[RMDB]
Chemical mapping of a 207-nucleotide RNA with DMS and 2A3.
RNA sequence: GGGAACGACUCGAGUAGAGUCGAAAAGAUUCCUCGUUGUUGAGCGAGGUUUAAGCAAAUCGACCACACAAACGUAGAGCCGACUACGGAUUUAUAAAUUAAGGCAUUAAGUGUGAUAAGGAGACAAAAAACGAUGUUGUGUUCGCACAACAUCGAAGAAUAUGCCACAGUUCGCUGUGGCAUAUUCAAAAGAAACAACAACAACAAC
Reactivity to DMS in 0.01 (KOAc 150mM, MgCl2 10mM, bicine 150mM(pH8.5), 24C), signal-to-noise 2, nucleotides 027 to 156: g030a300u000u000c010c020u010c060g000u000u000g000u040u010g000a180g010c020g000a070g020g030u020u000u000a050a210g000c050a030a110a120u020c050g130a050c020c030a060c020a150c010a100a150a080c010g020u000a030g000a240g000c010c050g010a160c010u000a000c000g000g020a300u000u010u000a050u010a060a080a060u010u000a050a020g000g000c010a260u000u000a020a110g020u000g010u000g000a040u010a050a020g060g050a190g000a080c050a000a030a060a090a070a130c040g020a020u000g010u000u010g040u010g000u000u010c300g010c020a080c020a010a040c010a010u000c000g010a040a010
Reactivity to 2A3 in 0.01 (KOAc 150mM, MgCl2 10mM, bicine 150mM(pH8.5), 24C), signal-to-noise 2, nucleotides 027 to 156: g060a090u050u060c000c010u030c000g040u040u090g040u020u070g000a010g000c040g010a010g040g080u030u070u130a030a020g000c020a040a000a020u100c040g070a020c000c010a000c010a020c000a060a130a000c000g000u000a000g030a060g020c010c000g040a020c020u000a000c020g000g010a020u000u270u000a150u090a110a020a030u050u190a030a000g000g000c020a010u120u120a110a070g010u000g000u000g050a040u040a080a110g070g010a070g000a010c050a020a120a020a000a000a000c010g000a000u010g000u000u030g000u000g000u070u040c140g000c050a000c000a010a000c000a010u000c000g000a010a000
For 2A3, 855 sequencing reads were counted. Conditions: 150 mM KOAc, 10 mM MgCl2 and 150 mM bicine (pH 8.5), 24 C. The DMS profile rests on 2,511 reads. For DMS the reverse transcriptase was MarathonRT. The data come from the RNA Mapping Database (RMDB), library M2RFPK.